Source information: Source: RMDB library M2RFPK, as collected in RNAgym. This 207-nucleotide RNA was probed chemically with 2A3 and DMS. 2A3 is a SHAPE reagent: it acylates the 2'-hydroxyl of flexible nucleotides of all four kinds. For DMS, 2,848 sequencing reads were counted. DMS (dimethyl sulfate) methylates the pairing face of unpaired adenines and cytosines.
[RMDB]
RNA sequence: GGGAACGACUCGAGUAGAGUCGAAAAAUACAUACUGACACCGGUUGCACAACAGGCUGUGUGGGACAAUAGAAUAACAAGGCUGUCAAUUUGAGCUUGACGGCUGCAAACCGAAUGGAGUGAAAUCGUAACCGGACUCACUUCGGUGAGUCCGGAACUGCUAUCUAAGUUUCGACUUAGAUAGCAGAAAAGAAACAACAACAACAAC
Reactivity to 2A3 in 0.01 (KOAc 150mM, MgCl2 10mM, bicine 150mM(pH8.5), 24C), signal-to-noise 3, nucleotides 027 to 156: a000u130a030c030a050u100a030c010u050g090a030c010a030c060c050g080g010u030u070g000c030a000c020a080a140c030a080g070g040c080u040g030u010g010u080g120g000g030a010c030a020a090u060a150g100a080a030u140a100a030c040a110a030g040g020c010u010g000u010c000a000a010u070u070u290g060a040g060c040u000u020g010a000c010g020g000c000u020g000c000a030a060a040c050c060g080a050a080u130g040g020a060g030u070g060a020a050a070u150c140g030u060a040a070c010c000g000g000a000c000u000c000a000c000u060u030c130g070g000u010g000a000g030u000c000c010g010g000a000a000
Reactivity to DMS in 0.01 (KOAc 150mM, MgCl2 10mM, bicine 150mM(pH8.5), 24C), signal-to-noise 2, nucleotides 027 to 156: a100u000a110c060a110u010a120c000u000g000a070c040a090c020c040g030g050u000u000g010c090a150c080a070a130c040a030g010g000c050u010g000u000g020u000g000g000g020a090c070a090a090u010a110g000a130a080u000a050a080c100a050a180g010g030c020u000g030u000c000a020a080u010u000u000g000a170g020c300u000u010g000a040c020g000g020c010u000g000c090a040a120a130c010c000g010a060a170u000g000g000a130g000u000g000a060a090a110u000c070g000u030a040a120c010c000g030g020a020c010u000c000a030c010u000u010c300g080g020u010g010a000g000u010c000c010g000g000a010a030